[RMDB]
RNA sequence: GGGAACGACUCGAGUAGAGUCGAAAAAGUUACAAAUAUUUCAAUGCAGCAUACUUGCAUUGAGCUGCUAAGCACGAAGCAGUAAGUGGUUAUGUAUAUAGCGACUUUAGGAAUUGUUGCAGGCUGAUAGCCGCAUAGAAUUCGUUCUAUGCGGCUAAAAAGAAACAACAACAACAAC
Reactivity to DMS in 0.01 (KOAc 150mM, MgCl2 10mM, bicine 150mM(pH8.5), 24C), signal-to-noise 3, nucleotides 027 to 126: a070g000u030u030a080c150a150a120a050u020a020u000u010u000c000a010a010u000g000c000a010g010c280a170u050a120c190u020u000g000c010a000u000u000g000a000g010c030u000g010c000u000a030a100g000c070a050c080g000a030a010g000c000a000g020u000a010a010g030u000g000g050u000u000a020u000g010u020a090u070a010u000a000g000c010g000a020c000u000u010u000a020g020g000a050a130u010u000g000u020u010g010c030a090g000g010c100u000g000a180
Reactivity to 2A3 in 0.01 (KOAc 150mM, MgCl2 10mM, bicine 150mM(pH8.5), 24C), signal-to-noise 2, nucleotides 027 to 126: a000g080u080u060a060c070a000a090a030u190a070u010u010u000c010a000a000u000g010c000a010g050c020a040u140a300c110u080u030g000c000a000u010u000g000a000g010c010u000g000c000u020a010a120g000c040a010c080g040a010a000g000c000a000g000u000a030a040g050u030g060g000u080u000a010u020g290u040a130u040a010u000a220g010c030g060a000c000u030u020u000a050g100g060a100a080u030u060g030u010u040g020c110a040g150g020c010u040g030a020